[RMDB]
RNA sequence: GGGAACGACUCGAGUAGAGUCGAAAAGAGUAGCCGGUCGACACAACGGAAGCGAAAGUGUCCGCGAUGUUGAUGAGCGUCGCCGGUUGUGGCGGCGGUGGCGGCGGUAGCAACGUCGGCACAUACGCGAGAGAGCCUCUUUCGAGAGGCUCUCUCGAAAAGAAACAACAACAACAAC
Reactivity to 2A3 in 0.01 (KOAc 150mM, MgCl2 10mM, bicine 150mM(pH8.5), 24C), signal-to-noise 2, nucleotides 027 to 126: g080a000g030u070a000g040c000c030g060g050u120c070g030a000c020a000c010a040a060c000g030g050a130a020g080c120g090a170a100a060g230u160g080u080c050c040g000c010g040a060u050g090u040u050g040a160u070g080a030g020c110g010u010c000g000c030c000g040g020u030u010g010u040g020g010c030g000g000c050g060g000u030g010g030c020g010g000c020g000g060u130a100g050c060a030a000c010g000u000c000g010g190c010a000c000a040u130a040c110g010
Reactivity to DMS in 0.01 (KOAc 150mM, MgCl2 10mM, bicine 150mM(pH8.5), 24C), signal-to-noise 1, nucleotides 027 to 126: g040a090g000u010a090g000c030c010g050g000u000c010g020a040c040a010c040a100a040c040g040g000a110a070g000c040g020a100a160a160g000u030g000u000c090c000g000c280g000a090u010g000u000u000g030a050u030g010a080g030c080g000u030c000g030c000c060g020g020u060u000g000u030g040g010c060g020g000c000g010g000u000g070g000c000g010g040c090g000g000u010a070g010c140a020a100c000g000u020c000g010g000c020a000c000a090u030a160c120g000
Record summary
This 177-nucleotide RNA was probed chemically with 2A3 and DMS. For DMS, 1,180 sequencing reads were counted. It was measured as part of the RMDB library OK1LIB. 2A3 adducts were read by reverse transcription with SuperScript II with manganese. The RNA was probed in 150 mM KOAc, 10 mM MgCl2 and 150 mM bicine (pH 8.5) at 24 C.